The record gives the reactivity of an RNA of 177 nucleotides to DMS and 2A3. It was measured as part of the RMDB library OK2TRN.
[RMDB]
RNA sequence: GGGAACGACUCGAGUAGAGUCGAAAACAGCCGGCAGGCAGAGGCUGGGGCACCCGUUAGCCAAUGGCACAGUGGAGGGGGCUCCUGUGGGUGUGAGGCUGAGAGUGCAGAUGGAGGUCUGCAGGGGAGCUCCUAUGUAUUUCGAUACAUAGGAGCUAAAAGAAACAACAACAACAAC
Reactivity to DMS in 0.01 (KOAc 150mM, MgCl2 10mM, bicine 150mM(pH8.5), 24C), signal-to-noise 4, nucleotides 027 to 126: c080a090g020c030c040g000g010c100a080g000g020c060a080g010a150g010g020c050u000g010g000g010g010c020a040c010c010c010g000u010u020a110g020c010c010a120a110u010g020g030c050a060c100a110g010u000g010g020a150g000g000g010g000g010c010u000c030c010u000g000u000g010g010g020u000g010u000g010a140g010g000c060u010g000a100g000a100g020u000g010c020a020g010a050u000g010g020a110g000g000u000c010u000g010c050a060g010g000g010g000
Reactivity to 2A3 in 0.01 (KOAc 150mM, MgCl2 10mM, bicine 150mM(pH8.5), 24C), signal-to-noise 2, nucleotides 027 to 126: c020a010g050c000c030g090g030c080a040g050g000c040a010g040a020g130g020c060u060g010g000g030g000c030a040c010c020c020g070u060u150a020g020c010c000a100a150u170g020g030c030a000c040a110g110u120g060g090a110g070g000g000g010g020c000u040c000c020u030g030u070g030g080g020u110g030u040g040a050g030g010c040u040g020a020g000a000g130u030g000c000a010g000a030u080g060g110a030g010g120u010c010u020g010c000a010g020g030g020g000